[RMDB]
RNA sequence: GGGAACGACUCGAGUAGAGUCGAAAAUCUGCAAUCUUAUGCCUGCUGGACUCAUUCCUGCGGUUAUGAUUAUGUCUACAACCCUUUCUUUGUCGAUGUUCAACAGUGGGGUUAUGUAGGCAAUCUUCUUCAAGUAGGAGUUCGCUCCUACUUGAAGAAAAGAAACAACAACAACAAC
Reactivity to 2A3 in 0.01 (KOAc 150mM, MgCl2 10mM, bicine 150mM(pH8.5), 24C), signal-to-noise 1, nucleotides 027 to 126: u000c020u070g000c040a000a060u020c000u070u070a040u110g000c000c010u030g000c040u030g060g000a050c010u030c240a080u170u050c000c020u020g010c000g020g010u080u100a020u070g010a020u010u160a060u160g000u000c010u010a000c000a000a010c000c000c000u040u190u120c050u130u070u010g020u050c070g200a240u170g120u210u140c000a020a030c000a100g010u010g000g000g000g020u050u030a080u100g000u000a010g010g020c020a000a030u000c020u040u000
The record gives the reactivity of an RNA of 177 nucleotides to 2A3. Reactivities are rounded to 0.1 and cut off at 0 and 3. 2A3 adducts were read by reverse transcription with SuperScript II with manganese.